[RMDB]
RNA sequence: GGGAACGACUCGAGUAGAGUCGAAAAUACUUCUCACCUUUAGUGAAAUACUCUUAUCCUUUCUCUUCUUGCGUUAAUGUUGCUAAUUAGUAUAAAAUACAUGCGCCCAUAUAUUCCAAUGGUAGGACCUAUGACACCAAUUCGUUGGUGUCAUAGGAAAAGAAACAACAACAACAAC
Reactivity to DMS in 0.01 (KOAc 150mM, MgCl2 10mM, bicine 150mM(pH8.5), 24C), signal-to-noise 2, nucleotides 027 to 126: u010a060c160u000u000c030u000c000a080c080c090u000u010u010a050g030u000g020a110a110a100u010a070c100u000c030u000u000a120u000c030c040u020u000u000c050u000c060u000u000c070u010u000g040c060g020u000u000a040a070u000g010u000u010g010c100u000a050a070u010u000a010g000u010a100u000a040a020a050a180u000a050c020a030u000g020c080g020c050c020c060a080u000a070u000a130u000u000c070c020a030a130u010g010g030u000a090g000g020a200
Reactivity to 2A3 in 0.01 (KOAc 150mM, MgCl2 10mM, bicine 150mM(pH8.5), 24C), signal-to-noise 2, nucleotides 027 to 126: u020a020c030u020u050c000u030c020a060c000c060u140u050u160a060g020u070g110a090a050a020u130a060c040u030c010u100u020a010u160c010c010u040u150u070c060u000c050u050u020c020u040u080g000c010g020u000u110a080a050u040g030u090u030g030c000u040a090a200u150u080a060g080u090a090u140a240a180a050a050u090a030c010a040u010g020c010g000c020c010c010a060u080a010u010a100u140u000c020c040a090a050u030g070g010u050a070g060g000a020